[RMDB]
RNA sequence: GGGAACGACUCGAGUAGAGUCGAAAAGAACAUCAGUUCGCUGAUGUUCAAAGGCCGAGUAGUGUUGGGUCGCGUAAGGCCAUACAUAAACAUUCACUCAGAAAACAACGUCCUUCGGGACGUUGAACGUCAACAGGUUGUUCGCAACCUGUUGACGAAAAGAAACAACAACAACAAC
Reactivity to DMS in 0.01 (KOAc 150mM, MgCl2 10mM, bicine 150mM(pH8.5), 24C), signal-to-noise 2, nucleotides 027 to 126: g010a010a000c000a010u000c000a050g000u000u040c290g000c010u000g000a000u000g000u000u020c000a020a110a080g020g000c030c050g020a050g000u000a010g040u000g000u000u000g010g020g020u000c040g000c300g030u010a090a060g000g010c010c020a090u010a120c240a060u020a050a010a050c010a010u000u000c220a000c010u010c030a140g000a100a060a040a110c010a000a000c000g000u010c000c010u010u000c150g020g000g010a000c000g010u010u000g000a030a090